[RMDB]
RNA sequence: GGGAACGACUCGAGUAGAGUCGAAAAGAUAUGGACGUGUGGAGUACGUUGAACUACAUUCGGGCAGAUGACUCGGAAACGAGUCAUCUGUCUCUAGCGUGAUGCAAUGAAACACACGUCCUAAGUCCAACUCUUUAGUCUUCGGACUAAAGAGUUGAAAAGAAACAACAACAACAAC
Reactivity to 2A3 in 0.01 (KOAc 150mM, MgCl2 10mM, bicine 150mM(pH8.5), 24C), signal-to-noise 2, nucleotides 027 to 126: g060a010u120a040u300g000g000a010c010g000u000g010u000g010g040a040g060u010a040c210g030u060u050g040a110a050c070u150a020c150a050u040u130c040g000g000g030c010a010g020a000u000g020a000c000u000c000g020g000a030a130a000c000g000a010g000u010c020a000u000c000u000g000u000c010u000c000u000a020g020c000g040u080g060a020u260g050c030a030a020u140g000a020a030a010c000a000c000a010c030g020u010c000c000u010a000a000g000u010c000
Reactivity to DMS in 0.01 (KOAc 150mM, MgCl2 10mM, bicine 150mM(pH8.5), 24C), signal-to-noise 3, nucleotides 027 to 126: g000a090u000a300u010g010g000a010c000g020u010g000u000g000g030a120g020u010a090c300g000u000u000g000a070a050c040u010a090c050a200u010u000c170g000g000g000c020a010g000a010u000g000a010c000u010c000g000g010a060a080a240c010g000a020g000u010c000a000u000c000u000g000u010c000u000c030u000a030g000c250g010u000g000a100u000g000c000a030a010u000g010a200a210a150c000a010c010a000c010g020u000c000c000u010a000a080g000u000c030